Source: RMDB library OK1LIB, as collected in RNAgym.
This 177-nucleotide RNA was probed chemically with 2A3 and DMS.
2A3 adducts were read by reverse transcription with SuperScript II with manganese.
For DMS the reverse transcriptase was MarathonRT.
Values cover nucleotides 27 to 126.
[RMDB]
RNA sequence: GGGAACGACUCGAGUAGAGUCGAAAAGAGGGGUCCCAGUGUCGUCUGGCAGGUUGUGCCUUGAAGCGCUGGGCUGAGUGGACAAGUACAGGCACGAUUUGUACGCGUGUCCAGAUGAUCAGGGAUAGCGAGUUUCAACCUUCGGGUUGGAAUUCGCAAAAGAAACAACAACAACAAC
Reactivity to 2A3 in 0.01 (KOAc 150mM, MgCl2 10mM, bicine 150mM(pH8.5), 24C), signal-to-noise 9, nucleotides 027 to 126: g070a020g010g030g000g020u030c000c000c010a010g050u060g020u070c050g030u010c020u050g010g000c020a060g070g070u090u060g040u080g060c010c000u040u110g070a090a020g030c020g000c030u030g000g030g000c000u010g010a020g040u070g000g020a020c010a080a030g020u040a050c020a050g030g000c040a010c150g040a120u020u030u080g030u050a030c040g020c050g070u040g010u010c000c000a000g010a050u070g000a010u050c060a030g010g000g020a030u080a030
Reactivity to DMS in 0.01 (KOAc 150mM, MgCl2 10mM, bicine 150mM(pH8.5), 24C), signal-to-noise 9, nucleotides 027 to 126: g000a060g010g000g010g010u010c000c000c000a050g020u020g010u020c030g020u010c040u000g000g010c020a040g010g020u000u020g020u000g000c000c020u000u010g010a140a110g000c060g010c010u000g000g000g010c030u000g010a090g010u010g010g000a040c040a060a070g000u010a060c080a040g000g000c050a090c120g000a130u010u010u010g010u010a030c050g000c070g010u000g000u010c000c010a020g000a040u010g010a090u010c070a180g000g010g000a070u020a150